[RMDB]
RNA sequence: GGGAACGACUCGAGUAGAGUCGAAAAAUUGACUAAAGUCAUUCAAUCCUAGCUGAUCUGGAGGUUGAUAAAUGGGCUUAUAAUACGGCCUACCUCUGCCAAAGUUGAGUAGUUCGUAGCGGUGGUAAAAAGCAGUUAUUUUCGAAUAACUGCUUUUAAAAGAAACAACAACAACAAC
Reactivity to DMS in 0.01 (KOAc 150mM, MgCl2 10mM, bicine 150mM(pH8.5), 24C), signal-to-noise 7, nucleotides 027 to 126: a050u010u010g010a050c020u040a070a100a160g000u010c010a010u000u010c100a060a130u010c010c000u000a060g020c050u010g000a050u010c050u000g010g010a060g000g010u020u000g000a080u010a040a050a120u030g000g000g000c020u000u010a080u020a090a160u020a080c130g000g000c000c000u000a050c030c020u010c020u010g020c080c080a050a120a080g010u000u000g000a070g010u010a050g020u000u010c060g010u000a050g000c060g000g000u000g000g000u020a040
Reactivity to 2A3 in 0.01 (KOAc 150mM, MgCl2 10mM, bicine 150mM(pH8.5), 24C), signal-to-noise 3, nucleotides 027 to 126: a000u070u060g010a030c050u160a150a040a060g000u030c020a020u040u050c040a040a060u010c000c010u060a010g010c100u120g060a170u130c030u020g030g070a050g100g000u050u080g040a100u120a220a110a080u100g020g000g010c030u060u050a070u040a280a040u070a070c060g010g000c000c000u000a000c000c000u000c020u010g010c000c020a210a070a010g000u090u120g020a000g040u060a040g020u020u060c050g020u010a020g030c040g040g010u070g010g000u040a040
Structure probing data (DMS and 2A3) for a 177-nucleotide construct. 2A3 is a SHAPE reagent: it acylates the 2'-hydroxyl of flexible nucleotides of all four kinds. The 2A3 profile rests on 1,343 reads.